Chemical mapping of a 207-nucleotide RNA with DMS. DMS adducts were read by reverse transcription with MarathonRT. It was measured as part of the RMDB library OK3TST. The reactions ran in a buffer of 150 mM KOAc, 10 mM MgCl2 and 150 mM bicine (pH 8.5), at 24 C.
RNA sequence: GGGAACGACUCGAGUAGAGUCGAAAAAGGCACAGAUGCAGGGGGGACUCGUCCAGGAUGGAGCAGUUUAAGCUGGAACGGUUAUUUAAAUGGUUCCACAGGAUAUUUCAGAACCAACGCAAACAAGCAAAUAUGGCAAAUGAAAGUGGACCAACGAAUUAAAAGCCCAUUUCGAUGGGCUUUUAAUAAAAGAAACAACAACAACAAC
Reactivity to DMS in 0.01 (KOAc 150mM, MgCl2 10mM, bicine 150mM(pH8.5), 24C), signal-to-noise 2, nucleotides 027 to 156: a030g040g000c040a140c090a190g010a130u000g010c040a090g030g000g000g020g060g000a060c040u010c030g020u070c010c030a170g020g000a120u020g010g000a060g000c010a110g030u000u000u000a080a080g030c070u010g020g030a020a070c100g020g010u000u000a110u000u000u000a020a060a110u010g020g060u030u000c000c010a130c000a200g020g010a080u000a070u010u000u030c000a120g020a180a040c020c010a040a070c140g000c060a050a110a080c060a050a090g020c090a110a050a170u010a100u000g040g010c060a020a080a150u000g010a030a110a090g040u000g000g000a080c000c010a050a080c070g000a070